[RMDB]
RNA sequence: GGGAACGACUCGAGUAGAGUCGAAAACGCGUCAUGUUCGCAUGACGCGCAUUACCCAGAAAGGAGCUCGGUAUAAAACUCCAACCCUUGGAAACAAGGGAAAACCGAUAGUAUUCGUACUAUCGAACUACUUCUCACUAUUCGUAGUGAGAAGUAGAAAAGAAACAACAACAACAAC
Reactivity to 2A3 in 0.01 (KOAc 150mM, MgCl2 10mM, bicine 150mM(pH8.5), 24C), signal-to-noise 5, nucleotides 027 to 126: c010g000c000g000u000c010a010u010g020u040u050c160g000c140a000u010g000a000c010g010c010g000c000a000u010u080a140c000c000c010a030g140a070a150a040g020g010a020g020c100u110c270g140g070u140a150u070a220a100a030a030c010u000c010c000a050a110c000c010c000u000u000g000g000a050a040a010c000a000a010g000g010g000a030a030a020a020c030c010g010a000u010a000g010u010a030u020u080c210g020u040a010c000u000a010u010c010g020a040a020
Reactivity to DMS in 0.01 (KOAc 150mM, MgCl2 10mM, bicine 150mM(pH8.5), 24C), signal-to-noise 4, nucleotides 027 to 126: c010g010c000g000u010c010a000u000g010u000u010c200g030c000a010u000g000a010c010g010c000g010c020a050u000u010a160c010c000c000a190g000a090a130a150g000g010a010g050c050u000c140g020g020u000a140u010a080a060a060a080c010u000c000c010a110a220c000c000c000u000u010g000g000a150a130a200c000a010a010g010g000g000a030a020a060a080c250c010g000a010u010a010g010u010a010u000u010c150g010u000a000c000u000a000u000c010g010a090a140